This 177-nucleotide RNA was probed chemically with 2A3 and DMS. Source: RMDB library TTRDEL, as collected in RNAgym. Reactivities are given for positions 27 through 126. Conditions: 150 mM KOAc, 10 mM MgCl2 and 150 mM bicine (pH 8.5), 24 C. 2A3 adducts were read by reverse transcription with SuperScript II with manganese. The DMS profile rests on 5,006 reads. The 2A3 profile rests on 7,945 reads.

[RMDB]
RNA sequence: GGGAACGACUCGAGUAGAGUCGAAAAGAUAUGGAUUAGUGAUGACCUCCGCCACGUUGAAAUCGGAAACGAUGGAGUGGAUGGAGCAAGCUAAUCCUAAGUCGGAAGACACUCUUCGGAGUGUCAAUCCUCCAUUAAGGUUCGCCUUAAUGGAGGAAAAAGAAACAACAACAACAAC
Reactivity to 2A3 in 0.01 (KOAc 150mM, MgCl2 10mM, bicine 150mM(pH8.5), 24C), signal-to-noise 4, nucleotides 027 to 126: g010a010u030a030u140g000g000a000u000u010a010g020u040g190a300u170g060a150c020c000u000c000c010g000c020c000a010c020g150u220u040g020a060a050a010u010c020g010g000a100a040a010c010g000a010u010g000g000a020g000u010g020g010a090u170g000g000a000g030c010a040a040g000c010u000a000a010u010c000c000u010a110a020g050u010c030g010g020a050a020g000a000c000a000c010u000c010u050u140c300g150g010a010g000u020g000u000c000a010a010
Reactivity to DMS in 0.01 (KOAc 150mM, MgCl2 10mM, bicine 150mM(pH8.5), 24C), signal-to-noise 3, nucleotides 027 to 126: g000a020u000a300u010g000g000a020u000u000a010g020u010g000a150u010g000a120c300c010u000c000c000g000c000c000a010c010g000u000u010g000a070a140a030u000c000g010g000a160a060a150c010g010a010u000g000g000a070g010u000g000g010a020u000g010g000a010g000c030a060a180g010c000u000a000a010u000c000c000u000a010a070g000u000c010g000g010a140a120g010a010c000a010c000u000c000u000u010c190g010g000a010g010u000g000u000c000a040a090